This 207-nucleotide RNA was probed chemically with 2A3. The reactions ran in a buffer of 150 mM KOAc, 10 mM MgCl2 and 150 mM bicine (pH 8.5), at 24 C. It was measured as part of the RMDB library OK3TST.
RNA sequence: GGGAACGACUCGAGUAGAGUCGAAAACAUCUGACGUUGUCUUAUCUGGGCCCACAACUUGCAAUGUUGAUGGCAUUGCCCCUCAGUCUGAUGAGUAUUCUAACAAAGUGUUCUCUGUUAAAGCAUCAAAUUUUGCUUCUAUGAUGAACCGCUUGUCGCAUUCUGAGUGUUUCGACACUCAGAAUGCAAAAGAAACAACAACAACAAC
Reactivity to 2A3 in 0.01 (KOAc 150mM, MgCl2 10mM, bicine 150mM(pH8.5), 24C), signal-to-noise 2, nucleotides 027 to 156: c010a010u020c050u030g010a010c010g020u100u030g010u070c060u090u190a200u040c080u100g000g000g000c020c000c000a010c000a010a000c010u090u300g120c100a150a190u110g000u010u050g070a230u010g010g030c060a110u040u190g020c030c000c000c000u050c000a040g030u000c030u060g000a020u040g000a030g070u050a070u080u050c040u070a090a110c040a100a040a000g040u080g000u070u000c000u000c020u020g150u200u190a090a010a000g000c000a020u060c080a030a090a300u160u240u090u040g000c000u020u000c050u070a080u110g020a010u050g010a030a010c030c060g000c010u000u080g010u090c080